[RMDB]
RNA sequence: GGGAACGACUCGAGUAGAGUCGAAAAGGAAUGCGUAGAAGCGCGCGGCGGGCAACGCGGGCAGCGCGUCGUCGGGGCCGCAUUCGCGCAGGCCGUGGCGCAAUUGGCUGCGCGCGACGACGGUGAAGCAUAUGCCACGAUUCGUCGUGGCAUAUGCAAAAGAAACAACAACAACAAC
Reactivity to 2A3 in 0.01 (KOAc 150mM, MgCl2 10mM, bicine 150mM(pH8.5), 24C), signal-to-noise 1, nucleotides 027 to 126: g100g020a210a070u200g160c000g020u040a010g000a150a030g000c020g000c020g000c010g000g000c060g010g040g000c040a010a020c010g020c080g070g040g110c060a040g020c000g040c010g000u040c020g040u080c000g050g000g050g000c030c020g000c030a060u070u120c040g000c050g000c020a030g090g000c000c070g140u000g010g000c000g010c000a090a190u150u130g150g000c010u010g000c000g000c050g030c000g000a000c000g010a000c010g000g100u140g080a020a040
Reactivity to DMS in 0.01 (KOAc 150mM, MgCl2 10mM, bicine 150mM(pH8.5), 24C), signal-to-noise 1, nucleotides 027 to 126: g010g040a100a060u000g020c010g010u000a010g010a070a300g000c020g050c020g040c010g010g020c020g010g000g010c110a040a140c040g020c040g000g010g000c070a110g000c050g000c030g050u000c080g000u020c050g000g000g010g070c080c030g000c070a040u000u000c050g010c030g010c010a130g020g000c000c000g000u000g000g000c180g000c060a050a100u000u020g020g000c010u000g040c020g000c000g010c030g000a160c070g000a010c020g000g030u000g010a110a180
This 177-nucleotide RNA was probed chemically with 2A3 and DMS. DMS adducts were read by reverse transcription with MarathonRT. The reactions ran in a buffer of 150 mM KOAc, 10 mM MgCl2 and 150 mM bicine (pH 8.5), at 24 C. For DMS, 1,279 sequencing reads were counted.